An RNA of 207 nucleotides, treated with 2A3 and DMS and read out base by base. Reactivities are rounded to 0.1 and cut off at 0 and 3.

RNA sequence: GGGAACGACUCGAGUAGAGUCGAAAAGGGCGUAAGCAGGCCAUGGACGAUCCAGUCUUCCGAUACACAGGAUAAUGUGCAUUGAACCUGAGUCCGUGUUGACUGUGGUAGAUGCGGGUGUCCAGGUAUGCCAAGUGGCAUCCCGGAAAACACCUGAAUCCAGCAUUUAGUUCGCUAAAUGCUGGAUAAAAGAAACAACAACAACAAC
Reactivity to 2A3 in 0.01 (KOAc 150mM, MgCl2 10mM, bicine 150mM(pH8.5), 24C), signal-to-noise 4, nucleotides 027 to 156: g050g010g010c050g030u160a130a010g090c030a010g080g030c010c010a040u050g050g020a000c020g030a030u020c010c030a030g010u030c030u080u050c080c030g050a080u060a100c050a010c020a060g030g020a060u090a150a110u200g060u110g030c100a090u000u080g040a080a120c010c010u030g010a010g040u000c030c000g080u040g000u060u060g080a070c010u050g010u040g080g010u050a030g030a060u110g050c000g000g000g000u010g000u010c000c030a020g020g010u020a020u010g000c000c010a260a200g140u300g130g000c000a000u040c000c000c020g000g000a090a160a000a010c010a010c000c030u020g020a010
Reactivity to DMS in 0.01 (KOAc 150mM, MgCl2 10mM, bicine 150mM(pH8.5), 24C), signal-to-noise 2, nucleotides 027 to 156: g010g020g010c040g020u010a050a130g020c040a100g010g020c000c010a080u000g010g010a070c010g010a130u000c090c040a080g010u000c020u000u000c050c060g000a120u010a020c010a010c010a050g000g010a190u000a100a130u000g060u010g020c050a070u000u000g000a070a030c090c030u000g000a130g010u000c000c040g010u010g000u000u000g020a100c020u010g030u000g000g010u000a150g020a130u000g040c000g010g000g020u010g000u000c000c000a040g000g030u010a000u000g070c030c020a160a210g000u010g020g020c010a020u000c010c000c010g000g010a040a050a070a170c020a010c010c000u010g000a120
It was measured as part of the RMDB library OK3TST. For DMS the reverse transcriptase was MarathonRT.